[RMDB]
RNA sequence: GGGAACGACUCGAGUAGAGUCGAAAAGAGGAGCCCACAGAGCUGUGGCUUAGCAUAACCCUAGAUACCACUUUCCAACUAAACUUCAUAUGGGCAAAGGGACAUUGACCAGCCCUGGGCAGAGUUCACACCUAUAGUUCUUCGGAACUAUAGGUGUAAAAGAAACAACAACAACAAC
Reactivity to 2A3 in 0.01 (KOAc 150mM, MgCl2 10mM, bicine 150mM(pH8.5), 24C), signal-to-noise 4, nucleotides 027 to 126: g090a040g080g040a020g040c070c110c000a000c040a020g300a040g070c160u040g020u150g070g000c020u040u010a030g010c010a070u050a160a130c000c000c000u010a040g050a090u100a060c030c000a070c030u080u040u030c030c020a050a050c070u150a120a050a050c010u070u050c050a050u050a110u270g050g030g000c060a070a080a120g060g000g020a040c040a110u070u190g060a030c000c000a000g000c000c000c000u000g030g000g000c020a020g010a020g120u100u110c080
Reactivity to DMS in 0.01 (KOAc 150mM, MgCl2 10mM, bicine 150mM(pH8.5), 24C), signal-to-noise 5, nucleotides 027 to 126: g020a120g010g010a100g020c060c010c020a050c120a110g000a120g030c110u010g020u010g020g000c070u000u000a060g000c080a090u000a080a120c030c020c010u000a100g000a110u020a060c030c020a060c070u000u010u000c040c030a070a100c120u000a040a070a070c050u010u000c060a090u000a070u010g000g000g020c030a030a080a080g010g000g000a100c090a090u010u000g000a110c040c030a160g000c020c010c020u010g000g000g020c090a100g010a100g020u000u000c140